[RMDB]
RNA sequence: GGGAACGACUCGAGUAGAGUCGAAAACUAAAUAUGCAACUGCUAAUUCUCUUCCACUGUAGCACAUCUAAAUUCCUAUUUGUCUCUCAUGGCCCAGUUCGCAUAUCCUUUCUUUACCCUCCCAGUCUAUGCUCCAAAUGAAGAGAGAGAACCAUAAUCAUACGAUUUAGUUCGCUAAAUCGUAUGAAAAAGAAACAACAACAACAAC
Reactivity to DMS in 0.01 (KOAc 150mM, MgCl2 10mM, bicine 150mM(pH8.5), 24C), signal-to-noise 4, nucleotides 027 to 156: c040u000a060a040a060u000a070u000g010c030a090a090c030u010g020c010u000a070a120u010u000c000u000c030u010u010c010c030a070c100u000g020u000a100g020c050a070c060a050u020c050u000a050a050a160u000u000c020c010u000a140u000u000u010g010u000c020u000c020u000c010a080u010g010g000c030c050c000a070g020u000u000c080g020c030a060u000a070u000c040c020u000u000u010c010u000u000u000a130c050c040c020u000c020c010c020a160g000u010c080u000a080u000g020c020u000c030c020a030a100a100u000g000a090a070g000a100g000a060g010a140g010a050a090c040c030a070u000a070a230
Reactivity to 2A3 in 0.01 (KOAc 150mM, MgCl2 10mM, bicine 150mM(pH8.5), 24C), signal-to-noise 5, nucleotides 027 to 156: c020u070a050a050a090u200a030u070g010c000a050a030c040u030g040c040u100a090a120u130u020c010u010c000u060u040c030c010a060c060u060g020u070a020g030c040a030c020a090u050c040u130a050a120a150u120u090c020c030u050a150u070u110u140g030u020c020u010c000u010c080a050u060g020g000c020c000c010a020g020u030u020c040g010c020a020u020a030u090c010c010u100u130u060c020u070u150u140a140c000c020c000u020c010c010c010a000g010u000c040u050a080u090g030c010u000c020c000a020a050a060u090g020a040a000g020a000g000a000g000a000g000a010a010c020c010a060u080a090a070
Source information:
This 207-nucleotide RNA was probed chemically with DMS and 2A3. The reactions ran in a buffer of 150 mM KOAc, 10 mM MgCl2 and 150 mM bicine (pH 8.5), at 24 C. High DMS reactivity at an A or C suggests that its Watson-Crick edge is free. For 2A3, 3,622 sequencing reads were counted. For DMS, 8,586 sequencing reads were counted. Reactivities are given for positions 27 through 156.